[RMDB]
RNA sequence: GGGAACGACUCGAGUAGAGUCGAAAACAGAGAUGAAACAACCGUACCAGAAGCGUCCAUACUAUAACUUCUACGACCUUCAAACUGAUAGCAACAUUCUCGAGGCAAUAUUCUACACCACGGAAGGCAAACAUAGCGUUUUCGAACGCUAUGUUUGAAAAGAAACAACAACAACAAC
Reactivity to 2A3 in 0.01 (KOAc 150mM, MgCl2 10mM, bicine 150mM(pH8.5), 24C), signal-to-noise 9, nucleotides 027 to 126: c040a010g070a000g040a120u110g080a080a060a040c030a040a050c050c010g060u080a070c010c040a030g020a070a010g030c030g050u000c020c020a080u060a140c050u110a070u070a250a080c020u070u030c020u060a050c060g040a030c010c000u030u060c000a060a070a040c070u090g040a070u060a070g030c030a010a050c010a060u090u030c010u010c050g010a020g010g000c010a050a010u040a070u210u040c020u030a030c020a020c040c020a020c030g070g040a070a030g090g020
Reactivity to DMS in 0.01 (KOAc 150mM, MgCl2 10mM, bicine 150mM(pH8.5), 24C), signal-to-noise 6, nucleotides 027 to 126: c110a100g000a110g010a090u010g000a120a110a060c100a060a080c060c050g020u000a070c060c040a090g010a120a050g020c050g010u030c030c050a050u030a080c110u040a100u030a070a110c090u000u010c030u010a110c100g000a060c050c020u000u000c030a050a090a070c080u010g000a060u010a070g000c100a040a050c080a090u010u010c030u000c000g000a050g000g010c030a060a040u030a100u020u020c050u000a070c070a050c020c020a050c030g000g010a080a050g000g030
Chemical mapping of a 177-nucleotide RNA with 2A3 and DMS. The 2A3 profile rests on 15,134 reads. It was measured as part of the RMDB library OK1LIB. DMS adducts were read by reverse transcription with MarathonRT. Reactivities are given for positions 27 through 126. Conditions: 150 mM KOAc, 10 mM MgCl2 and 150 mM bicine (pH 8.5), 24 C.